[RMDB]
This 177-nucleotide RNA was probed chemically with DMS. It was measured as part of the RMDB library OK2TRN.

RNA sequence: GGGAACGACUCGAGUAGAGUCGAAAAGGUCUUACGUCAGCCAUGAGAACAACGGUAACUCUCAUGGUUGUCACAGAGAUGUGACGACGCUGACCAUGUAAGUUACCGCUUGUUACAUGGUAAGACAUGGAUAAUGCACCUUCGGGUGCAUUAUCCAAAAAGAAACAACAACAACAAC
Reactivity to DMS in 0.01 (KOAc 150mM, MgCl2 10mM, bicine 150mM(pH8.5), 24C), signal-to-noise 2, nucleotides 027 to 126: g000g000u000c030u000u000a040c090g000u010c130a290g000c040c010a020u020g000a230g010a000a030c010a000a010c020g000g000u000a010a020c010u000c050u000c010a010u000g010g000u010u000g000u000c000a010c030a030g000a170g000a170u000g010u000g010a010c000g010a140c300g000c230u020g000a000c050c000a010u000g000u000a060a000g010u010u000a040c020c000g010c220u000u010g000u000u000a020c000a010u000g000g000u000a030a070g010a020c010a140